[RMDB]
RNA sequence: GGGAACGACUCGAGUAGAGUCGAAAACGAAAUCUAUGACGGUGGUUGUCUUAAUGCUUCUGAAGUGGUUGUUAAUAAUUUAGACAAGAGUGCUGGCCAUCCUUUUAAUAAGUUUGGCAAAGCUCGUAUACGAUAUGCUUCGGCAUAUCGAAAAGAAACAACAACAACAAC
Reactivity to 2A3 in 0.01 (KOAc 150mM, MgCl2 10mM, bicine 150mM(pH8.5), 24C), signal-to-noise 4, nucleotides 027 to 129: c070g010a090a000a020u120c040u120a060u120g100a060c040g010g080u000g000g000u050u040g070u010c010u050u190a200a070u070g070c110u070u070c020u060g060a120a040g000u000g050g020u000u000g000u070u070a040a070u100a070a090u100u140u070a110g020a050c060a100a000g010a000g000u050g020c130u080g160g000c000c000a000u030c010c010u050u150u020u000a180a030u280a070a040g000u000u000u050g000g000c000a160a000a000g000c020u020c050g000u030a070u000a050
Reactivity to DMS in 0.01 (KOAc 150mM, MgCl2 10mM, bicine 150mM(pH8.5), 24C), signal-to-noise 5, nucleotides 027 to 129: c090g020a040a080a100u020c020u090a070u040g010a210c170g030g000u010g040g010u010u000g020u020c070u000u000a030a080u030g020c050u020u060c060u090g020a060a040g000u000g050g030u050u020g020u040u000a090a070u000a100a150u040u060u030a090g000a120c110a110a090g020a090g030u000g020c080u000g050g000c010c010a020u020c020c010u020u000u000u000a080a080u050a040a020g010u000u000u000g000g100c030a030a090a140g010c020u030c050g020u040a100u020a150
The data come from the RNA Mapping Database (RMDB), library 15KLIB. Structure probing data (2A3 and DMS) for a 170-nucleotide construct. The 2A3 profile rests on 3,988 reads.